[RMDB]
RNA sequence: GGGAACGACUCGAGUAGAGUCGAAAAGUAUAGCAUGACUGGCAAUGCGUAUACGAUGAAUCAGCCAGGAAAGAAUCCGUUGUGCGAAAGCACUUCGGUAAUGCAUAAUCGGUUCGAGUACAGCCCGAUACGAGAACCGUUGUUAGUACGGGCUAGACGUAUGGAGUACUUUCGAGUACUCCAUACGAAAAGAAACAACAACAACAAC
Reactivity to DMS in 0.01 (KOAc 150mM, MgCl2 10mM, bicine 150mM(pH8.5), 24C), signal-to-noise 2, nucleotides 027 to 156: g090u000a040u000a100g000c010a040u000g020a160c000u000g000g000c020a240a040u010g020c020g010u000a080u000a040c060g030a170u000g000a120a160u030c090a190g020c030c000a030g010g010a120a110a180g010a250a190u000c010c000g020u000u000g000u000g060c000g000a180a100a300g030c010a020c020u000u000c000g010g040u000a030a040u020g060c080a180u010a060a070u000c060g040g000u010u000c000g000a300g000u000a010c030a060g000c010c000c000g000a180u020a010c010g000a300g000a020a020c020c000g010u000u000g010u000u000a130g020u000a060c070g000g020g000c030u000a040g000a300
Reactivity to 2A3 in 0.01 (KOAc 150mM, MgCl2 10mM, bicine 150mM(pH8.5), 24C), signal-to-noise 2, nucleotides 027 to 156: g050u010a020u070a040g000c020a010u030g050a090c020u010g000g010c020a090a040u030g040c050g080u090a070u000a090c090g040a120u210g160a020a120u170c050a060g130c000c010a020g050g060a050a130a020g060a030a060u040c000c000g010u010u000g000u000g000c000g060a060a020a000g000c010a000c000u000u000c010g000g020u060a050a030u050g000c010a080u080a120a140u210c030g040g000u040u020c030g000a000g010u000a010c000a030g040c000c030c000g050a030u000a030c010g020a000g010a050a030c000c030g000u000u040g090u020u080a080g020u040a050c060g000g010g000c020u030a020g010a110